This 207-nucleotide RNA was probed chemically with DMS and 2A3. For DMS the reverse transcriptase was MarathonRT.
[RMDB]
RNA sequence: GGGAACGACUCGAGUAGAGUCGAAAAGAAAAAGAGAAAAACGUGGAUAUCAAGCUUGACGAUAACACGAAGUAGUUUUUUCAAGCUAUAUACCUAAUAUGUGUUUUUCCAAAUUAGGUAAUGAAUUCAAUAAAGAAAAAACUAAGCAUGUAGGGCUAGUAUACAGAUAGUUCGCUAUCUGUAUACUAAAAGAAACAACAACAACAAC
Reactivity to DMS in 0.01 (KOAc 150mM, MgCl2 10mM, bicine 150mM(pH8.5), 24C), signal-to-noise 2, nucleotides 027 to 156: g000a040a040a110a150a100g020a110g010a090a040a050a100a070c050g020u000g000g050a170u000a100u000c030a150a160g000c060u030u000g020a110c060g020a080u010a030a060c010a160c040g010a090a120g010u010a080g040u000u000u000u000u010u010c010a050a090g030c070u000a170u010a140u000a020c000c010u000a040a050u000a110u000g030u000g000u000u000u000u000u000c030c020a030a060a030u000u000a010g020g000u000a000a090u000g000a070a130u000u000c100a040a160u010a120a130a150g000a010a010a060a050a040a030c000u010a040a070g000c040a030u000g030u020a050g020g000g010c030u000
Reactivity to 2A3 in 0.01 (KOAc 150mM, MgCl2 10mM, bicine 150mM(pH8.5), 24C), signal-to-noise 6, nucleotides 027 to 156: g080a000a090a010a000a000g090a010g050a050a070a040a020a010c020g010u020g010g040a150u030a020u120c030a070a000g050c050u050u060g040a020c040g010a020u010a050a010c000a000c040g010a100a020g050u070a010g000u010u000u010u020u020u060c010a020a010g000c020u030a020u020a010u010a210c000c000u000a020a020u060a080u060g110u010g060u060u100u040u160u100c030c000a050a130a010u000u000a010g000g000u040a030a050u040g020a010a050u170u150c120a050a060u150a170a080a100g020a010a030a010a020a000a000c020u030a030a030g060c060a040u100g020u080a030g010g050g010c020u010
It was measured as part of the RMDB library RSTRND.
The RNA was probed in 150 mM KOAc, 10 mM MgCl2 and 150 mM bicine (pH 8.5) at 24 C.